This 207-nucleotide RNA was probed chemically with 2A3 and DMS. For 2A3 the reverse transcriptase was SuperScript II with manganese. The reactions ran in a buffer of 150 mM KOAc, 10 mM MgCl2 and 150 mM bicine (pH 8.5), at 24 C.
RNA sequence: GGGAACGACUCGAGUAGAGUCGAAAAAUACAAGGGGAGGUUGCGGCCAAAUGUUGUAUGCAGAAAGCGUGAGGAAGGUAGCACUUAGACACUCACGAGUAGCGGUUCGGCAGUAGUGCUAAAAUGAGACAGUACGAAAAGUUCGCUUUUCGUACAAGUAUACUUUGACCUUCGGGUCAAAGUAUACAAAAGAAACAACAACAACAAC
Reactivity to 2A3 in 0.01 (KOAc 150mM, MgCl2 10mM, bicine 150mM(pH8.5), 24C), signal-to-noise 3, nucleotides 027 to 156: a000u190a020c070a030a060g090g000g010g000a020g020g030u040u040g050c060g010g020c030c040a020a100a120u070g020u010u010g060u050a080u090g010c030a010g100a090a030a010g050c030g000u020g020a020g020g020a060a030g040g010u030a010g030c010a010c030u070u080a040g010a040c020a010c030u030c000a020c070g000a010g030u040a000g000c030g040g000u070u040c010g050g000c010a040g010u080a010g030u010g010c000u060a020a030a030a110u080g000a020g010a010c080a080g020u010a000c000g000a000a000a000a000g050u050u070c170g030c090u000u000u000u000c000g000u000a000c000a010a000
Reactivity to DMS in 0.01 (KOAc 150mM, MgCl2 10mM, bicine 150mM(pH8.5), 24C), signal-to-noise 2, nucleotides 027 to 156: a110u000a060c060a050a100g000g060g010g020a070g010g000u000u000g000c090g010g010c010c030a060a120a080u010g010u020u000g000u000a100u000g010c040a140g000a120a060a090g010c030g030u000g060a070g010g000a110a080g010g000u000a090g010c030a050c060u000u010a110g000a130c020a090c060u010c020a040c030g010a120g000u000a040g030c030g040g040u010u000c070g040g000c040a090g010u000a040g030u010g010c000u000a020a040a080a120u000g000a210g030a170c070a120g000u000a000c000g010a000a000a030a020g010u000u000c300g000c010u000u000u000u000c000g010u000a000c000a000a090

For DMS the reverse transcriptase was MarathonRT. The data come from the RNA Mapping Database (RMDB), library M2RFPK.